[RMDB]
RNA sequence: GGGAACGACUCGAGUAGAGUCGAAAAGUUGGGCCAUGGGAUUUGGGCGAAGGCUCAGAUCUCCUGGUCACUAGAAUGGAGGGAUCCGCAUGAGGCUGGUUUUACAGAGCAGUGAACACUUCCUUCUCUUGACAGUGGAGGGAUCACAGGCUGCAGUCCUUAUUGUUAGGUUCGCCUAACAAUAAGGAAAAGAAACAACAACAACAAC
Reactivity to DMS in 0.01 (KOAc 150mM, MgCl2 10mM, bicine 150mM(pH8.5), 24C), signal-to-noise 1, nucleotides 027 to 156: g000u000u020g030g000g020c030c000a040u030g040g000g010a000u010u000u000g000g020g020c000g030a220a150g020g030c000u010c000a050g030a030u000c000u000c000c030u010g000g000u000c000a040c070u010a090g000a120a110u010g000g000a130g040g000g010a050u010c010c040g040c010a150u000g010a120g040g000c040u000g020g030u000u000u000u010a150c110a000g010a200g000c020a060g050u000g000a060a060c060a090c050u010u000c030c000u000u000c020u000c070u000u010g020a120c100a090g000u010g000g010a070g000g020g020a030u000c030a070c060a120g050g020c030u000g010c040a120g010u000
Reactivity to 2A3 in 0.01 (KOAc 150mM, MgCl2 10mM, bicine 150mM(pH8.5), 24C), signal-to-noise 2, nucleotides 027 to 156: g100u130u090g020g010g000c000c020a010u020g000g010g000a010u010u000u020g010g000g010c070g090a180a040g220g000c010u010c000a000g000a010u000c010u020c000c000u010g000g000u000c000a000c000u020a020g120a160a080u110g030g040a040g060g030g000a080u020c090c010g030c060a070u090g010a040g100g000c020u040g000g050u020u060u090u020a070c060a020g070a010g080c020a000g000u020g080a090a020c010a010c080u050u040c020c000u060u020c040u000c010u070u200g140a090c100a070g020u030g050g020a010g000g000g000a000u060c030a040c010a020g090g000c000u040g010c030a030g060u020
Chemical mapping of a 207-nucleotide RNA with DMS and 2A3. The 2A3 profile rests on 2,043 reads. The DMS profile rests on 2,594 reads. The RNA was probed in 150 mM KOAc, 10 mM MgCl2 and 150 mM bicine (pH 8.5) at 24 C.